[RMDB]
RNA sequence: GGGAACGACUCGAGUAGAGUCGAAAACUUAGAAAAUUCAUACCAUACUAAUAUUUUUAUUGGAGGAAUGGCAAAAUUUGGAAUUAAGGGAGAGACCUGUAAUGUGCUUACAGGCACUGAUGUUAAACAGGUAAAUCAAGUUCGCUUGAUUUACCUGAAAAGAAACAACAACAACAAC
Reactivity to DMS in 0.01 (KOAc 150mM, MgCl2 10mM, bicine 150mM(pH8.5), 24C), signal-to-noise 2, nucleotides 027 to 126: c030u000u000a100g000a060a070a080a060u000u000c030a120u000a200c000c000a010u000a140c010u010a050a060u000a020u000u000u000u000u000a080u030u000g000g020a130g000g010a090a030u000g000g020c160a030a060a050a070u000u010u000g010g020a120a080u000u000a050a030g000g000g010a120g020a100g010a110c030c000u000g000u000a020a020u000g020u010g040c080u000u010a040c120a060g010g010c030a020c060u000g000a070u010g000u000u000a060a050a200
Reactivity to 2A3 in 0.01 (KOAc 150mM, MgCl2 10mM, bicine 150mM(pH8.5), 24C), signal-to-noise 1, nucleotides 027 to 126: c020u110u110a090g210a020a190a110a030u230u100c040a050u140a120c010c010a020u070a090c000u020a000a300u040a230u170u240u110u100u030a070u070u050g010g010a050g020g070a100a020u040g020g000c020a000a000a000a300u080u050u190g020g000a040a070u140u000a050a110g000g020g000a160g000a040g050a110c040c000u040g000u020a050a000u180g070u090g140c020u070u110a020c000a020g050g000c000a040c000u020g070a050u000g020u160u040a060a040a000